[RMDB]
RNA sequence: GGGAACGACUCGAGUAGAGUCGAAAAACAAUUACAUUGGCCUAGGUUUGCGUGCCUGCCUUUCGGGGGUUACGGCCGCAUUCCAAAAAGCUGGAAAGGAUGGGUCACCGAUUUAUUUGGGCAAGUCAAAAUUCGACCCGAUACCAGCUCCUGACAACAUGUGCAAAUAUUUCGAUAUUUGCACAUGAAAAGAAACAACAACAACAAC
Reactivity to DMS in 0.01 (KOAc 150mM, MgCl2 10mM, bicine 150mM(pH8.5), 24C), signal-to-noise 2, nucleotides 027 to 156: a070c060a090a130u000u000a120c070a190u000u000g000g000c030c030u000a150g020g020u000u000u000g000c020g020u000g050c000c000u020g020c010c040u000u000u000c250g040g030g020g020g030u000u020a100c150g040g010c000c020g000c040a070u020u000c050c010a030a080a090a080a050g010c040u000g000g000a100a160a200g020g020a070u010g020g000g020u000c010a220c040c020g020a110u000u020u000a080u030u000u000g030g050g000c050a050a090g000u000c060a080a030a080a240u000u010c060g020a080c000c000c010g000a100u010a050c030c020a080g000c000u000c040c040u000g010a150c020a050a280
Reactivity to 2A3 in 0.01 (KOAc 150mM, MgCl2 10mM, bicine 150mM(pH8.5), 24C), signal-to-noise 4, nucleotides 027 to 156: a000c070a040a060u240u160a120c060a100u110u120g050g010c010c030u050a130g020g000u010u020u020g000c010g050u130g030c000c010u040g010c000c010u060u040u140c300g100g020g000g000g060u180u150a090c080g000g000c000c000g000c000a010u000u020c010c000a090a060a020a030a020g010c000u020g010g050a070a120a030g130g030a040u170g010g010g000u020c030a010c040c020g000a010u090u130u030a140u060u190u120g020g010g020c060a100a030g050u150c060a050a080a080a150u090u110c050g020a030c000c000c010g020a020u050a040c000c000a000g010c000u010c030c060u140g080a040c020a110a030

This 207-nucleotide RNA was probed chemically with DMS and 2A3. The 2A3 profile rests on 1,997 reads. The RNA was probed in 150 mM KOAc, 10 mM MgCl2 and 150 mM bicine (pH 8.5) at 24 C. Source: RMDB library OK3TST, as collected in RNAgym. 2A3 adducts were read by reverse transcription with SuperScript II with manganese.